[RMDB]
The record gives the reactivity of an RNA of 177 nucleotides to 2A3 and DMS. Conditions: 150 mM KOAc, 10 mM MgCl2 and 150 mM bicine (pH 8.5), 24 C. 2A3 adducts were read by reverse transcription with SuperScript II with manganese.

RNA sequence: GGGAACGACUCGAGUAGAGUCGAAAACCGUAACUUCGGUUACGGAUAAAGGAUGAUGACCGGUUUCGGGACUGAGCUAUGAUGACACCAGCUAUCGCUGACUAACUCUGCUUUCUUCGGAAAGCAAACCAUCUAUAUGCUUCGGCAUAUAGAUGGUAAAAGAAACAACAACAACAAC
Reactivity to 2A3 in 0.01 (KOAc 150mM, MgCl2 10mM, bicine 150mM(pH8.5), 24C), signal-to-noise 3, nucleotides 027 to 126: c020c000g000u000a010a000c000u050u050c140g110g000u020u020a000c010g010g000a040u170a030a120a020g100g010a050u110g010a040u050g070a080c010c010g010g050u030u120u220c060g030g010g030a060c040u090g040a020g040c010u050a030u210g090a090u120g010a040c020a030c050c010a020g030c020u080a060u220c080g000c030u000g020a030c010u030a080a020c020u050c070u150g000c020u020u030u010c000u010u010c060g110g000a010a000a000g000c000a000a030
Reactivity to DMS in 0.01 (KOAc 150mM, MgCl2 10mM, bicine 150mM(pH8.5), 24C), signal-to-noise 3, nucleotides 027 to 126: c000c010g020u000a010a010c010u000u010c190g050g020u000u010a000c000g000g010a100u010a030a110a100g000g020a090u010g000a110u010g010a130c040c030g000g020u000u010u010c060g000g000g020a080c110u000g000a060g010c040u000a050u010g000a100u000g000a050c100a070c110c020a040g030c040u000a060u000c090g000c020u000g010a080c140u010a050a080c100u000c070u010g010c010u000u000u000c010u000u010c180g020g000a010a010a000g010c020a040a030